[RMDB]
Conditions: 150 mM KOAc, 10 mM MgCl2 and 150 mM bicine (pH 8.5), 24 C. Chemical mapping of a 207-nucleotide RNA with 2A3 and DMS. DMS adducts were read by reverse transcription with MarathonRT. The DMS profile rests on 1,804 reads. Source: RMDB library RNAMAK, as collected in RNAgym.
RNA sequence: GGGAACGACUCGAGUAGAGUCGAAAAAGCGCUUUCGAGCGCUGGCAUCGCGUACUACCUGACAUGAAUAUGUUUGGGAGUAGAAUCCCAAAUAGGAUUCUACGACGAUCAAACAGAUUCAACAGCAGGUAUCGCUGUACCCUAGCUUCGGCUAGAACGACAAGGGGAAGUUCGCUUCCCCUUGUCGAAAAGAAACAACAACAACAAC
Reactivity to 2A3 in 0.01 (KOAc 150mM, MgCl2 10mM, bicine 150mM(pH8.5), 24C), signal-to-noise 2, nucleotides 027 to 156: a000g010c010g040c040u080u110u300c300g100a010g000c000g000c000u000g000g020c020a110u070c070g000c000g030u110a120c020u000a010c000c000u020g120a170c020a090u030g010a020a010u030a010u000g030u000u010u000g010g010g000a000g000u000a000g000a000a000u050c010c050c000a100a120a170u300a110g010g000a000u000u030c000u010a020c030g270a160c040g000a030u020c020a000a000a000c000a000g060a060u000u000c000a090a090c020a150g090c010a000g000g000u020a020u140c000g000c000u020g020u080a030c000c010c010u000a000g010c000u080u040c180g070g000c030u040a000g020a120a040
Reactivity to DMS in 0.01 (KOAc 150mM, MgCl2 10mM, bicine 150mM(pH8.5), 24C), signal-to-noise 1, nucleotides 027 to 156: a020g000c000g010c000u000u000u000c220g050a050g020c010g030c000u000g010g010c050a110u010c180g030c020g030u020a030c220u000a020c010c010u000g010a150c020a300u000g000a040a020u000a020u000g010u000u000u000g020g000g000a110g050u010a060g040a030a040u000c000c000c020a080a110a290u010a020g000g000a020u010u000c000u000a000c000g010a080c170g040a150u010c000a070a010a030c000a010g010a030u000u000c010a080a040c050a160g040c040a000g020g010u000a010u000c040g000c000u000g060u000a010c000c030c050u000a080g050c010u020u000c190g020g000c050u000a110g000a070a130